[RMDB]
RNA sequence: GGGAACGACUCGAGUAGAGUCGAAAAGUGCGUGUGCUGUGGCAGCGGCUUUUUUGGCUGCGCUCGGCGUGUGUGCUGUGUGUGCUUGCUGGUGCCCUGUGCUGCGGUGGGACGUCAAGGUCAGUUCAUGCUACUGACAAUUCGUUGUCAGUAGCAUAAAAGAAACAACAACAACAAC
Reactivity to 2A3 in 0.01 (KOAc 150mM, MgCl2 10mM, bicine 150mM(pH8.5), 24C), signal-to-noise 4, nucleotides 027 to 126: g060u080g020c000g000u090g030u020g040c040u040g030u140g160g010c040a080g010c050g030g010c020u030u090u030u000u100u300g050g000c020u030g000c010g000c010u010c010g010g010c010g000u010g010u010g000u010g000c030u020g030u030g020u010g020u030g050c030u030u050g000c040u050g010g040u070g000c030c000c000u020g030u060g010c040u020g000c010g000g050u040g000g030g050a040c030g010u040c040a040a040g030g010u040c030a030g010u040u090c040
Reactivity to DMS in 0.01 (KOAc 150mM, MgCl2 10mM, bicine 150mM(pH8.5), 24C), signal-to-noise 4, nucleotides 027 to 126: g020u010g010c010g040u010g010u000g020c020u010g000u030g010g000c030a100g080c010g010g020c010u000u000u030u040u030u040g010g010c010u000g000c020g000c010u000c040g010g000c010g030u010g000u010g010u000g000c000u010g010u020g000u000g020u010g010c040u010u010g000c040u000g010g010u020g000c020c030c030u010g000u010g010c060u020g010c060g000g020u010g000g000g000a080c080g010u000c080a070a070g010g010u010c050a090g000u010u010c110
An RNA of 177 nucleotides, treated with 2A3 and DMS and read out base by base. The reactions ran in a buffer of 150 mM KOAc, 10 mM MgCl2 and 150 mM bicine (pH 8.5), at 24 C. 2A3 adducts were read by reverse transcription with SuperScript II with manganese. As a SHAPE reagent, 2A3 marks flexible, mostly unpaired nucleotides at the ribose 2'-OH. Reactivities are given for positions 27 through 126.